The data come from the RNA Mapping Database (RMDB), library TTRDEL. The record gives the reactivity of an RNA of 177 nucleotides to DMS and 2A3. For DMS, 991 sequencing reads were counted. The reactions ran in a buffer of 150 mM KOAc, 10 mM MgCl2 and 150 mM bicine (pH 8.5), at 24 C.
RNA sequence: GGGAACGACUCGAGUAGAGUCGAAAAGAUAUGGACUUUGAUCUCGGAACUACAGUCAGCGAUCGGAAACGAUCGGACUGCCGAGGGAGUCCUAAGUCAAACCAACCCUUGUUCGCAAGGGUUGGAACGGUUUCAAAGAGUUCGCUCUUUGAAACCGAAAAGAAACAACAACAACAAC
Reactivity to DMS in 0.01 (KOAc 150mM, MgCl2 10mM, bicine 150mM(pH8.5), 24C), signal-to-noise 1, nucleotides 027 to 126: g000a040u010a300u010g000g010a020c010u000u000u030g020a080u010c000u000c000g040g010a070a050c190u010a300c040a010g010u030c000a120g030c030g010a020u010c000g000g000a200a080a270c020g030a000u030c000g060g020a000c000u000g000c020c000g000a020g000g000g000a000g010u050c000c000u000a050a050g000u000c010a060a100a150c000c000a000a000c000c000c010u000u000g010u010u010c260g040c040a010a000g000g010g010u010u010g000g000a010a090
Reactivity to 2A3 in 0.01 (KOAc 150mM, MgCl2 10mM, bicine 150mM(pH8.5), 24C), signal-to-noise 2, nucleotides 027 to 126: g040a010u080a040u160g010g020a010c020u110u110u170g160a110u190c020u010c000g070g000a120a140c190u240a070c300a000g000u020c010a090g280c030g030a010u010c010g000g000a080a070a040c010g000a000u030c010g000g000a010c000u010g010c010c000g010a000g000g000g010a010g000u000c000c010u000a110a010g030u000c050a010a100a170c000c010a000a020c020c000c010u000u050g030u030u050c260g000c160a010a000g000g010g000u000u020g000g000a000a020